Chemical mapping of a 177-nucleotide RNA with DMS. For DMS the reverse transcriptase was MarathonRT. The RNA was probed in 150 mM KOAc, 10 mM MgCl2 and 150 mM bicine (pH 8.5) at 24 C. It was measured as part of the RMDB library OK2TRN.
[RMDB]
RNA sequence: GGGAACGACUCGAGUAGAGUCGAAAAGACACGACGGAGACGUCGUGUCAAAGAGUGGGAAACCACUCAAAGAGCCACAGCUUCGGCUGUGGCUCAAGGCGCGGCCACGUCCGCGGAACAAACUGAAUGCUGCUAAAUAUUUCGAUAUUUAGCAGCAAAAAGAAACAACAACAACAAC
Reactivity to DMS in 0.01 (KOAc 150mM, MgCl2 10mM, bicine 150mM(pH8.5), 24C), signal-to-noise 2, nucleotides 027 to 126: g020a010c000a010c030g000a020c010g010g010a250g000a200c020g060u010c010g000u010g020u010c010a010a030a080g000a000g010u010g000g000g000a140a110a150c000c000a010c010u000c000a020a060a170g000a050g000c000c000a000c020a030g070c030u020u030c300g010g000c000u020g030u010g000g030c000u000c000a030a020g000g000c030g020c000g030g000c010c210a100c210g010u010c000c000g050c000g010g020a040a100c220a050a080a120c080u000g010a090a120